[RMDB]
RNA sequence: GGGAACGACUCGAGUAGAGUCGAAAACACGGAUCGUGGCCCUACGAUCGUACGGCCGAUCGUACAGCGCGUACACAUAUACAGACGGCGCCUCGUCGUACUCAUCGAUCGAUGAUCGUACAGUGGCCUGACUCCAUAUGUUCGCAUAUGGAGUCAGAAAAGAAACAACAACAACAAC
Reactivity to 2A3 in 0.01 (KOAc 150mM, MgCl2 10mM, bicine 150mM(pH8.5), 24C), signal-to-noise 5, nucleotides 027 to 126: c020a020c050g090g060a160u150c070g060u060g070g000c010c010c000u020a010c010g010a000u000c010g010u140a180c000g010g050c000c010g000a020u000c020g010u000a010c010a030g020c020g010c010g040u220a110c060a000c040a110u210a020u090a250c070a050g110a040c050g050g090c000g020c000c040u100c090g180u010c050g000u010a030c020u030c060a050u010c020g040a020u020c040g020a010u040g010a010u030c000g010u020a040c060a140g070u120g120g010c010
Reactivity to DMS in 0.01 (KOAc 150mM, MgCl2 10mM, bicine 150mM(pH8.5), 24C), signal-to-noise 4, nucleotides 027 to 126: c080a100c090g020g020a080u010c070g020u000g010g000c010c020c040u000a010c000g000a000u000c020g020u000a060c020g020g000c040c000g010a010u000c120g000u010a030c050a100g000c120g010c090g000u010a070c090a100c150a110u010a110u020a100c250a090g010a090c160g020g020c050g000c070c090u010c120g010u010c110g010u000a030c010u000c080a050u000c000g000a030u010c030g020a080u000g000a010u000c030g010u000a030c120a090g030u010g010g010c060